[RMDB]
RNA sequence: GGGAACGACUCGAGUAGAGUCGAAAAAGAGAUCGAGGAUUUGGGGAGGAGAGGGGAACCGAGGGGGGUUCGAACUCAAGAAGAGAAGAUUUUCGAGGAAAUACUCCCAAGAAGUUCCCGGAGGGAUGGAGGAGUACGUUCGCGUACUCCAAAAGAAACAACAACAACAAC
Reactivity to DMS in 0.01 (KOAc 150mM, MgCl2 10mM, bicine 150mM(pH8.5), 24C), signal-to-noise 3, nucleotides 027 to 129: a060g030a100g030a000u030c060g010a070g000g020a130u010u050u050g010g000g000g000a110g040g010a080g030a090g030g000g020g000a070a050c020c070g040a160g000g000g010g000g000g000u040u060c030g010a070a040c090u010c090a030a040g030a080a090g030a060g040a080a130g020a070u040u040u040u050c030g050a060g000g030a090a070a070u040a040c060u020c040c040c060a070a070g010a040a110g020u000u000c000c010c010g000g000a130g020g010g030a080u000g000g050a300
The record gives the reactivity of an RNA of 170 nucleotides to DMS. The DMS profile rests on 10,208 reads.